An RNA of 207 nucleotides, treated with DMS and 2A3 and read out base by base. For DMS the reverse transcriptase was MarathonRT. In probing experiments dimethyl sulfate is read out at A N1 and C N3, which are open when not base-paired. The reactions ran in a buffer of 150 mM KOAc, 10 mM MgCl2 and 150 mM bicine (pH 8.5), at 24 C.
[RMDB]
RNA sequence: GGGAACGACUCGAGUAGAGUCGAAAACCCCCACUUCGGUGGGGGAAAAAAGCGUACUACGUGGUGGUACCGGGAGUCGCCUGUCCCAAAUAGGACAGCGACGAGGAUCGGUACGUAACAUCCACGUAUCGCAAAAAGCGACAGUUCGCUGUCGCAAGUUGAUAAUUCUCUUCGGAGAAUUAUCAACAAAAGAAACAACAACAACAAC
Reactivity to DMS in 0.01 (KOAc 150mM, MgCl2 10mM, bicine 150mM(pH8.5), 24C), signal-to-noise 1, nucleotides 027 to 156: c000c020c000c010c000a010c000u000u000c270g010g060u010g020g000g040g040g010a000a000a040a040a060a070g000c000g030u000a050c120u000a010c010g020u000g000g000u000g000g050u000a000c010c030g000g000g010a300g000u000c010g000c100c000u000g000u000c000c000c000a070a170a300u020a070g000g000a030c000a020g030c030g030a120c000g000a070g030g010a180u000c000g030g000u010a010c010g050u000a070a050c090a140u020c010c000a000c020g000u010a000u000c020g000c010a050a120a060a130a120g040c020g010a050c000a030g000u010u010c300g040c020u000g040u000c010g000c020a000a040
Reactivity to 2A3 in 0.01 (KOAc 150mM, MgCl2 10mM, bicine 150mM(pH8.5), 24C), signal-to-noise 2, nucleotides 027 to 156: c000c010c010c000c000a000c030u050u070c260g080g010u050g000g000g000g000g000a060a150a020a000a000a020g030c040g020u080a060c040u010a000c090g010u000g000g000u000g020g010u000a000c000c010g020g000g000a010g020u000c000g030c100c070u000g010u010c020c030c000a180a240a040u220a050g000g000a000c000a000g010c000g010a010c010g000a110g000g010a010u040c000g010g000u000a000c010g000u000a020a000c010a170u100c010c000a000c020g000u000a010u030c000g010c000a040a050a080a030a000g020c000g000a000c000a020g010u060u090c120g090c210u000g000u020c000g000c020a000a010